Structure probing data (DMS and 2A3) for a 177-nucleotide construct. Conditions: 150 mM KOAc, 10 mM MgCl2 and 150 mM bicine (pH 8.5), 24 C.
[RMDB]
RNA sequence: GGGAACGACUCGAGUAGAGUCGAAAAGAUAUGGAGACGGUCAUGUUGGAGUACCUAGUCGGAAACGACUAGAAGUACGAUGAAGACAUGAGCCGUCUCCUAAGUCAAAGGCAGGUUCGCCUGCCAAGACGGAUCAUAAGUUCGCUUAUGAUCCGUCAAAAGAAACAACAACAACAAC
Reactivity to DMS in 0.01 (KOAc 150mM, MgCl2 10mM, bicine 150mM(pH8.5), 24C), signal-to-noise 3, nucleotides 027 to 126: g010a030u000a300u000g000g010a020g030a030c010g010g010u000c000a000u000g000u000u000g000g000a050g020u000a000c010c020u000a020g010u010c010g000g020a120a080a190c010g010a010c020u000a020g000a060a100g020u000a000c000g000a120u020g000a190a210g000a000c000a010u000g000a080g010c000c000g030u000c000u000c000c000u000a010a070g010u010c020a070a130a140g000g000c010a040g000g000u000u010c300g010c000c000u010g020c000c000a080a080
Reactivity to 2A3 in 0.01 (KOAc 150mM, MgCl2 10mM, bicine 150mM(pH8.5), 24C), signal-to-noise 2, nucleotides 027 to 126: g000a000u110a030u180g010g000a020g000a000c000g020g020u010c020a000u050g020u010u030g000g030a020g010u000a000c010c000u000a000g000u010c000g030g010a030a030a040c030g000a020c000u000a000g040a210a060g000u000a000c040g090a300u040g030a000a050g030a010c000a000u020g020a010g000c010c000g010u000c000u000c000c000u020a020a000g000u000c030a020a000a080g000g000c000a010g000g070u080u220c260g140c080c000u000g010c000c000a020a010